[RMDB]
Description:
The record gives the reactivity of an RNA of 177 nucleotides to 2A3. It was measured as part of the RMDB library OK1LIB.
RNA sequence: GGGAACGACUCGAGUAGAGUCGAAAAUAAACAAAACAAAUUUAAACGAGUAUGGUGCAGCUGAGAGGCUCGACAGAUGCACCUAAAAGCGAGCCUUCAAACAAAAUCCUAAACCAAGAAACAAAAACGUCAUCGAGCACUUCGGUGCUUGAUGACGAAAAGAAACAACAACAACAAC
Reactivity to 2A3 in 0.01 (KOAc 150mM, MgCl2 10mM, bicine 150mM(pH8.5), 24C), signal-to-noise 1, nucleotides 027 to 126: u070a000a080a010c000a010a060a040a000c040a040a030a100u240u220u120a150a000a000c070g040a010g090u000a160u290g000g000u000g000c000a010g000c030u090g020a090g000a060g180g000c000u030c010g000a000c000a000g040a040u030g000c000a020c000c000u020a030a040a000a000g040c010g000a000g050c000c000u000u080c030a000a040a130c020a100a170a060a000u220c000c000u290a110a080a080c120c000a200a000g070a080a140a000c090a000a000a000a000a000